[RMDB]
RNA sequence: GGGAACGACUCGAGUAGAGUCGAAAACACCAGCCCCGCCUUGCCGUACUCGCUGGGCAUGCUGGAGGAGAAGCUGAAGGCGAUGUACAAGUGUGUGACGGAGGGCAAGUUCAGCGAGGCCCUGCGCCUGUGUGGAAGAAUUCGUUCUUCCACACAGAAAAGAAACAACAACAACAAC
Reactivity to DMS in 0.01 (KOAc 150mM, MgCl2 10mM, bicine 150mM(pH8.5), 24C), signal-to-noise 8, nucleotides 027 to 126: c110a140c040c040a140g010c020c040c020c060g010c020c010u000u000g010c030c040g020u000a080c030u000c030g020c010u010g010g000g010c040a040u000g000c020u000g010g020a250g010g000a270g020a110a140g010c020u010g000a270a150g000g000c020g010a040u000g020u000a060c060a080a060g010u000g020u000g000u000g010a080c050g010g000a100g000g010g000c020a060a070g000u010u000c060a060g010c050g000a070g010g000c010c010c020u000g010c080g010c110
Reactivity to 2A3 in 0.01 (KOAc 150mM, MgCl2 10mM, bicine 150mM(pH8.5), 24C), signal-to-noise 5, nucleotides 027 to 126: c050a030c000c000a020g060c000c010c000c010g020c020c030u040u150g120c040c000g010u040a050c010u010c020g020c000u030g000g040g000c000a000u080g020c000u040g020g080a050g030g070a190g070a160a050g160c040u050g020a050a010g050g000c040g060a050u050g020u070a070c020a070a070g050u030g010u010g070u130g180a030c040g040g050a030g030g000g000c030a030a040g060u090u150c060a020g010c050g050a020g010g050c000c000c020u080g010c030g030c000

Chemical mapping of a 177-nucleotide RNA with DMS and 2A3. The reactions ran in a buffer of 150 mM KOAc, 10 mM MgCl2 and 150 mM bicine (pH 8.5), at 24 C. Source: RMDB library OK2TRN, as collected in RNAgym. For DMS, 13,962 sequencing reads were counted. The 2A3 profile rests on 9,304 reads.